[RMDB]
RNA sequence: GGGAACGACUCGAGUAGAGUCGAAAAUCAUGGAUUGAGCUCUGUUGACCUUACUGCCCGAGAAAGGUGGCUUAGAAAAACACUGCAUCCUACUCAUUCCUACGUUACCAUCUCGUACGAUUACCCAGUUGUCAAGACGAAUAAGACGAGACAUGUGCAACGUGGUGACGUUCGCGUCACCACGUUGAAAAGAAACAACAACAACAAC
Reactivity to 2A3 in 0.01 (KOAc 150mM, MgCl2 10mM, bicine 150mM(pH8.5), 24C), signal-to-noise 1, nucleotides 027 to 156: u130c050a100u050g000g000a020u000u180g100a050g000c000u100c060u100g100u070u020g090a140c000c000u020u060a010c050u050g030c030c010c000g060a100g140a050a080a030g100g000u020g000g000c030u060u080a060g150a000a160a000a000a000c050a000c010u080g000c020a020u060c050c000u040a150c000u020c060a020u130u110c020c000u080a070c030g110u110u050a100c000c000a050u070c040u000c000g030u100a220c000g040a010u010u040a020c000c050c160a020g020u060u130g000u180c060a000a000g020a010c020g000a070a060u160a180a000g100a090c000g020a000g210a070c000a080u240g110u220g210